The record gives the reactivity of an RNA of 177 nucleotides to DMS and 2A3. The DMS profile rests on 3,016 reads. The reactions ran in a buffer of 150 mM KOAc, 10 mM MgCl2 and 150 mM bicine (pH 8.5), at 24 C. It was measured as part of the RMDB library OK2TRN.
[RMDB]
RNA sequence: GGGAACGACUCGAGUAGAGUCGAAAAAGGAAUUUUUCAUUGCGAUGACUUACUAUUUAAUGAAUUGCAUGUCCUUAGGAUAUAGACAUUAUUGGUAGCUUCUAGAUGACCUUCCAGGACAAAUGACCCUCUACCAUAUGUUCGCAUAUGGUAGAGGAAAAGAAACAACAACAACAAC
Reactivity to DMS in 0.01 (KOAc 150mM, MgCl2 10mM, bicine 150mM(pH8.5), 24C), signal-to-noise 4, nucleotides 027 to 126: a050g000g020a080a020u000u000u000u000u010c010a020u010u000g010c190g000a020u000g000a200c070u010u000a040c070u000a070u020u000u000a020a020u000g000a120a090u000u000g010c130a040u000g010u000c000c020u010u010a150g050g010a030u000a030u000a080g000a150c020a010u000u000a050u000u000g010g000u000a010g010c030u010u000c020u000a300g000a030u000g000a040c300c160u010u000c020c020a140g020g000a110c150a030a040a060u010g010a190c200
Reactivity to 2A3 in 0.01 (KOAc 150mM, MgCl2 10mM, bicine 150mM(pH8.5), 24C), signal-to-noise 4, nucleotides 027 to 126: a000g130g010a100a040u090u110u040u040u090c020a020u010u040g050c000g030a040u020g060a100c000u080u100a010c020u060a110u290u090u040a040a020u050g070a090a120u100u130g100c080a020u040g020u010c010c020u150u120a100g000g030a020u030a000u020a070g070a010c020a030u050u040a030u060u030g050g000u000a000g010c020u020u000c000u010a030g000a070u010g020a040c000c000u010u010c000c010a000g090g030a020c050a090a140a050u110g060a040c000

Record summary: DMS adducts were read by reverse transcription with MarathonRT. For 2A3 the reverse transcriptase was SuperScript II with manganese.